[RMDB]
RNA sequence: GGGAACGACUCGAGUAGAGUCGAAAAUUUGGGGUUGUUUAACAAGUAUAAGUACUUCUCUGGUGCUAUGGAAACAGCCGCUUAUCGUGAAGCUGCAGCAUGUCAUCUUGCUAAAGCCUUACAAACAUCAUCCACAGGUUCGCCUGUGGAAAAAGAAACAACAACAACAAC
Reactivity to 2A3 in 0.01 (KOAc 150mM, MgCl2 10mM, bicine 150mM(pH8.5), 24C), signal-to-noise 7, nucleotides 027 to 129: u080u030u040g030g000g010g010u010u000g030u030u020u050a060a000c040a040a020g060u040a040u040a170a020g020u030a050c010u130u170c070u010c070u180g050g000u000g020c010u050a060u130g040g030a060a020a010c010a010g030c000c020g080c040u080u100a130u180c090g010u050g040a050a010g000c010u020g010c020a000g000c000a000u010g020u100c020a130u070c080u040u040g000c000u020a030a000a000g010c000c000u010u040a030c030a020a100a020c000a090u120c000a020
Reactivity to DMS in 0.01 (KOAc 150mM, MgCl2 10mM, bicine 150mM(pH8.5), 24C), signal-to-noise 5, nucleotides 027 to 129: u000u000u000g010g000g000g030u000u040g010u000u000u000a070a060c100a090a120g000u050a090u000a100a040g010u030a050c130u010u020c080u040c150u030g000g010u000g000c040u010a070u080g030g000a070a040a020c070a000g020c020c050g050c040u000u000a050u020c050g000u000g030a000a000g070c020u000g040c270a040g000c000a050u020g020u060c200a070u000c110u000u000g060c060u030a040a180a000g020c030c010u000u000a050c110a060a050a140c120a000u050c130a070